This 177-nucleotide RNA was probed chemically with DMS.
For DMS the reverse transcriptase was MarathonRT.
Source: RMDB library OK2TST, as collected in RNAgym.

[RMDB]
RNA sequence: GGGAACGACUCGAGUAGAGUCGAAAAGGCAGGGAAUGCACUUCACCUCUCAGACCCCCACCUUCAGGUUAUGCUGCCGCCAUCAUCUUACGGAACCGGGUGCAAAGCCUGGUUCUGGGGGCACCUCCGCAAAAAGUUCAUUCGUGAACUUUUUGCGAAAAGAAACAACAACAACAAC
Reactivity to DMS in 0.01 (KOAc 150mM, MgCl2 10mM, bicine 150mM(pH8.5), 24C), signal-to-noise 1, nucleotides 027 to 126: g010g000c130a010g000g000g000a200a080u030g000c060a100c020u000u000c070a080c010c000u000c050u000c040a120g000a300c040c000c000c010c030a130c110c020u020u030c110a060g000g010u010u020a040u000g020c060u000g020c060c040g000c050c040a030u000c070a090u010c110u010u000a060c070g010g020a020a020c020c000g000g030g030u000g030c180a100a100a110g010c000c000u000g020g000u010u000c000u000g000g010g010g000g000c130a070c050c050u000c030
DMS (dimethyl sulfate) methylates the pairing face of unpaired adenines and cytosines.